[RMDB]
RNA sequence: GGGAACGACUCGAGUAGAGUCGAAAAUGAAAGUAGUCUCCUGCAGCGUCUGGGGUUUCCGUUGCAGUCCUCGGAACCAGGACCUCGGCGUGGGCUAGCGAGUUAUGGCGACGAAGGCCGUGAAAAAACCAGAAAUAAGUUUCGACUUAUUUCUGGUAAAAGAAACAACAACAACAAC
Reactivity to 2A3 in 0.01 (KOAc 150mM, MgCl2 10mM, bicine 150mM(pH8.5), 24C), signal-to-noise 2, nucleotides 027 to 126: u160g030a010a080a010g060u070a010g050u030c010u020c030c020u020g010c010a020g010c000g050u040c040u230g060g000g070g000u010u080u000c030c000g030u040u070g020c070a060g060u080c000c020u020c010g010g020a030a030c050c000a050g040g050a010c000c010u000c020g020g010c020g010u040g010g220g000c030u040a010g020c010g030a020g000u040u080a080u100g030g000c030g020a080c060g030a070a010g110g010c040c050g000u050g000a080a030a000a050a010
Reactivity to DMS in 0.01 (KOAc 150mM, MgCl2 10mM, bicine 150mM(pH8.5), 24C), signal-to-noise 6, nucleotides 027 to 126: u000g000a100a100a120g020u000a050g010u000c020u000c020c010u010g000c050a300g010c050g010u000c020u010g020g010g010g000u000u000u000c030c050g020u000u010g000c100a110g000u010c050c040u000c080g010g010a050a060c120c070a200g010g010a040c020c010u000c030g010g010c040g010u010g000g000g010c010u000a030g010c090g000a060g020u010u010a060u000g010g010c020g010a080c100g010a130a110g020g020c010c020g020u000g000a000a060a070a070a100

The record gives the reactivity of an RNA of 177 nucleotides to 2A3 and DMS. The data come from the RNA Mapping Database (RMDB), library M2PK90. The DMS profile rests on 7,142 reads. 2A3 adducts were read by reverse transcription with SuperScript II with manganese. The reactions ran in a buffer of 150 mM KOAc, 10 mM MgCl2 and 150 mM bicine (pH 8.5), at 24 C. DMS adducts were read by reverse transcription with MarathonRT. For 2A3, 4,172 sequencing reads were counted.